Overview:
An RNA of 177 nucleotides, treated with 2A3 and DMS and read out base by base. The reactions ran in a buffer of 150 mM KOAc, 10 mM MgCl2 and 150 mM bicine (pH 8.5), at 24 C. It was measured as part of the RMDB library OK2TST.

[RMDB]
RNA sequence: GGGAACGACUCGAGUAGAGUCGAAAAGGGCACCCCAGCUUUUCAGGGGCUUUUCAGGGUCGUCCUUGCCCUGCACGUGGGACCAGGACCGAUGUUCACCUGCUGGAAACUUGGGUCUCAGCCAGUGGCUACUCUGAUUAUUCGUAAUCAGAGUAGCAAAAGAAACAACAACAACAAC
Reactivity to 2A3 in 0.01 (KOAc 150mM, MgCl2 10mM, bicine 150mM(pH8.5), 24C), signal-to-noise 5, nucleotides 027 to 126: g020g010g000c050a030c010c000c010c000a020g030c060u040u030u050u080c070a050g070g020g060g020c030u220u190u110u140c080a030g090g030g040u080c040g010u010c020c000u010u010g010c010c000c000u030g040c150a130c100g130u130g000g030g040a120c010c020a010g000g010a020c030c060g060a060u060g080u100u130c070a070c080c020u140g150c030u050g080g000a050a060a040c010u030u030g080g030g030u000c020u010c020a030g040c020c000a100g070u080g130
Reactivity to DMS in 0.01 (KOAc 150mM, MgCl2 10mM, bicine 150mM(pH8.5), 24C), signal-to-noise 8, nucleotides 027 to 126: g010g010g010c040a110c050c000c010c100a080g010c090u000u000u010u000c170a110g010g000g000g010c090u010u000u010u000c170a110g000g020g020u000c100g010u000c000c000u000u000g000c010c000c000u000g000c090a050c120g010u000g000g000g010a070c040c080a070g000g000a050c030c020g000a070u000g000u000u000c190a120c050c030u010g010c100u010g000g000a090a040a050c030u000u000g010g010g010u000c020u000c060a080g000c040c030a100g010u000g010

The 2A3 profile rests on 8,103 reads. The DMS profile rests on 13,780 reads.